[RMDB]
RNA sequence: GGGAACGACUCGAGUAGAGUCGAAAAUCGCGUUGGCUGCCUAAUUCAAGGAAUUAGCGUGCCUUCAUGCUAAGGGUUUGAUAUCUGCUAAAACCCGGUGCAUUCAUCAAUGCAGGUUAAGCCAAUGAAACGGCUCACGAAUUCGUUCGUGAGCCAAACAUCCACUAAACUUCGGUUUAGUGGAUGUAAAAGAAACAACAACAACAAC
Reactivity to DMS in 0.01 (KOAc 150mM, MgCl2 10mM, bicine 150mM(pH8.5), 24C), signal-to-noise 3, nucleotides 027 to 156: u000c080g030c070g020u000u000g020g060c030u000g050c080c050u010a020a070u000u000c030a190a150g030g020a090a070u000u000a030g010c090g050u010g010c020c020u000u000c080a080u010g030c020u000a300a170g010g010g010u000u000u000g010a200u000a050u010c060u000g000c070u000a130a030a020a050c010c000c010g000g080u000g020c030a070u010u010c100a090u000c090a130a150u010g000c070a020g020g010u000u010a040a080g000c020c010a050a080u000g000a050a080a100c090g030g030c000u000c010a010c010g000a030a050u000u000c300g030u000u000c000g030u000g000a020g040c000c000a010a030
Reactivity to 2A3 in 0.01 (KOAc 150mM, MgCl2 10mM, bicine 150mM(pH8.5), 24C), signal-to-noise 3, nucleotides 027 to 156: u080c030g000c010g020u000u000g000g000c020u060g060c030c000u030a050a020u050u110c110a220a140g170g020a070a060u030u010a030g040c040g060u040g020c000c010u030u060c050a060u080g000c000u040a020a040g030g000g000u010u010u030g030a050u060a130u180c100u170g040c060u110a020a040a010a000c000c000c000g010g010u030g000c010a030u070u170c040a100u080c080a130a080u110g050c040a000g050g000u100u170a040a020g000c020c020a020a050u050g040a040a060a050c100g000g000c000u010c010a010c000g010a010a020u090u040c140g030u100u000c000g000u020g040a000g000c000c000a000a000